Annotation: An RNA of 207 nucleotides, treated with 2A3 and read out base by base. Values cover nucleotides 27 to 156. The RNA was probed in 150 mM KOAc, 10 mM MgCl2 and 150 mM bicine (pH 8.5) at 24 C. The 2A3 profile rests on 1,012 reads.

RNA sequence: GGGAACGACUCGAGUAGAGUCGAAAAAGACCACCUCUACGGAGGUGGUCAAGUCACGUAGCUAGUACCAGGUUGCAAUACGAGAGCGUUAGUCCUGGGGCGUACGGUGGCAGUACGCUGCCACCGAUAAAACUUGAAUACUUCGGUAUUCAAGUAAGGAUCUGUAUUUCUUCGGAAAUACAGAUCCAAAAGAAACAACAACAACAAC
Reactivity to 2A3 in 0.01 (KOAc 150mM, MgCl2 10mM, bicine 150mM(pH8.5), 24C), signal-to-noise 2, nucleotides 027 to 156: a000g020a010c010c000a000c010c000u010c010u060a070c200g140g000a010g010g000u000g000g000u000c000a010a000g020u000c000a000c040g090u050a030g110c110u080a090g050u070a140c020c030a000g010g040u010u130g110c070a110a100u060a170c060g010a040g050a010g230c050g040u040u110a040g030u000c000c000u000g020g010g010g000c070g050u090a040c040g030g020u010g020g000c000a000g020u070a030c280g010c090u000g030c000c000a000c000c000g000a000u010a010a040a000a010c000u000u000g000a000a000u000a000c000u000u040c130g110g000u000a000u000u000c020a000a000g020u010a030a070